[RMDB]
RNA sequence: GGGAACGACUCGAGUAGAGUCGAAAAUACAUUUGGCAAAACCUGCAGAAUCUACAACAUGAAGAGUGAACUGUAAAGUAAACUACAGACCUUUGUUAAUAAUGAUGGAUCAGUUUGAGUUCUCCCUUUGUGACACACAUACCACACUAAUGCAAGAAUCAGUAGCAUUAUUCGUAAUGCUACUGAUAAAAGAAACAACAACAACAAC
Reactivity to DMS in 0.01 (KOAc 150mM, MgCl2 10mM, bicine 150mM(pH8.5), 24C), signal-to-noise 4, nucleotides 027 to 156: u010a080c050a100u010u000u000g010g030c000a060a110a060a080c030c020u000g000c020a100g030a090a090u000c030u000a090c030a080a100c040a060u000g000a060a070g000a090g040u000g000a080a080c020u000g020u000a060a090a200g010u010a060a090a090c020u000a060c040a060g010a100c050c030u000u000u000g020u000u010a060a100u000a080a080u010g020a080u000g020g010a070u000c030a090g020u000u000u000g020a050g010u010u000c010u000c020c010c010u000u000u000g020u000g000a100c060a050c070a060c050a090u000a090c000c000a040c040a070c070u000a060a080u000g010c060a050a110g010a120
Reactivity to 2A3 in 0.01 (KOAc 150mM, MgCl2 10mM, bicine 150mM(pH8.5), 24C), signal-to-noise 8, nucleotides 027 to 156: u130a010c040a050u040u040u060g030g000c010a010a040a050a080c010c010u020g010c020a030g050a090a060u050c030u090a070c040a130a020c020a090u100g050a050a030g060a020g070u080g040a070a040c010u020g020u110a040a040a050g040u040a060a120a070c060u060a030c030a020g030a080c000c010u050u090u120g060u090u050a110a100u130a110a040u150g070a040u040g010g050a050u050c010a030g040u010u090u110g050a050g010u030u010c030u030c010c020c000u020u040u060g050u030g030a030c020a000c000a000c000a110u050a080c000c040a020c020a010c070u140a090a080u140g030c080a060a040g070a090